Background: The record gives the reactivity of an RNA of 207 nucleotides to DMS and 2A3. Conditions: 150 mM KOAc, 10 mM MgCl2 and 150 mM bicine (pH 8.5), 24 C.

[RMDB]
RNA sequence: GGGAACGACUCGAGUAGAGUCGAAAAAGCUUUGGUCUCUCCAGACCUGAAGUGGCAGGAAUGGCGUGAGGCUGGCUUCACAGAGCAGCGAUCACUGCCUGCUUCCAACGGUGGGAGGAUAACAGGCCGCUGCACUUCGAGCCCAACUCAGGCCCAGGAGACUAAUGUAGUUCGCUACAUUAGUCUCAAAAGAAACAACAACAACAAC
Reactivity to DMS in 0.01 (KOAc 150mM, MgCl2 10mM, bicine 150mM(pH8.5), 24C), signal-to-noise 1, nucleotides 027 to 156: a060g010c060u000u000u000g030g000u010c010u000c110u000c110c080a070g010a080c000c000u040g020a080a060g030u010g010g000c000a100g000g020a090a060u000g050g040c050g040u010g010a050g010g010c090u000g020g030c030u020u000c090a110c060a100g000a120g030c050a060g010c010g000a100u000c160a230c060u000g010c000c000u010g010c000u010u000c020c080a110a160c190g010g000u000g060g070g040a200g000g000a090u020a050a050c020a050g000g040c000c010g000c000u020g030c020a110c020u020u090c080g030a070g020c010c000c030a060a110c070u000c070a100g000g010c010c000c020a090g010
Reactivity to 2A3 in 0.01 (KOAc 150mM, MgCl2 10mM, bicine 150mM(pH8.5), 24C), signal-to-noise 3, nucleotides 027 to 156: a000g000c030u110u040u060g010g000u020c020u000c030u030c090c040a030g010a050c010c020u040g020a060a000g030u070g050g050c080a050g090g080a140a110u130g020g040c130g120u040g010a000g020g060c060u020g020g000c010u090u100c040a090c040a020g010a020g010c000a000g000c010g030a070u180c100a090c240u100g000c000c010u010g000c000u010u010c040c030a170a130c170g230g100u120g050g010g000a010g020g010a030u060a210a100c010a010g000g000c010c010g000c010u000g000c010a020c020u020u040c040g000a010g000c040c010c010a010a040c010u020c030a000g100g000c000c010c010a050g040
In probing experiments dimethyl sulfate is read out at A N1 and C N3, which are open when not base-paired. 2A3 adducts were read by reverse transcription with SuperScript II with manganese. For 2A3, 3,696 sequencing reads were counted. The data come from the RNA Mapping Database (RMDB), library ARCHII.